Source information
Chemical mapping of a 177-nucleotide RNA with DMS and 2A3. The data come from the RNA Mapping Database (RMDB), library OK1LIB.
[RMDB]
RNA sequence: GGGAACGACUCGAGUAGAGUCGAAAAUCGCCGCGUCUGCCGCUCUUGCUCAACACAUUGUCGAAUCACACACCGGUCCAAUAGAAUACGCCGCUACACUGCACCCGGUGGGCGCGCCCAGCAGCGGAAAUGCAACAGCGUUCGCGCUGUUGCAUUUAAAAGAAACAACAACAACAAC
Reactivity to DMS in 0.01 (KOAc 150mM, MgCl2 10mM, bicine 150mM(pH8.5), 24C), signal-to-noise 1, nucleotides 027 to 126: u010c020g000c130c010g000c030g000u000c020u020g060c030c020g030c090u000c080u000u000g000c030u000c040a090a140c180a020c040a050u030u000g000u010c010g010a110a020u020c060a020c090a020c110a000c070c000g000g000u020c000c060a050a030u100a090g000a170a070u000a200c130g000c020c030g070c020u000a070c060a080c050u000g000c100a130c060c020c030g020g010u000g000g010g000c000g040c100g010c000c000c030a050g000c070a030g000c020g000g010
Reactivity to 2A3 in 0.01 (KOAc 150mM, MgCl2 10mM, bicine 150mM(pH8.5), 24C), signal-to-noise 2, nucleotides 027 to 126: u080c030g000c040c020g000c000g000u010c040u050g000c010c000g040c030u020c000u080u100g010c020u040c030a000a030c040a000c000a190u030u180g050u080c040g030a070a090u110c000a010c000a000c000a000c050c020g060g050u080c050c050a060a010u060a100g090a120a030u090a050c000g050c000c000g040c020u050a030c020a000c020u060g010c000a030c030c000c000g010g020u010g020g050g000c020g000c010g030c000c000c000a040g030c000a000g020c000g100g000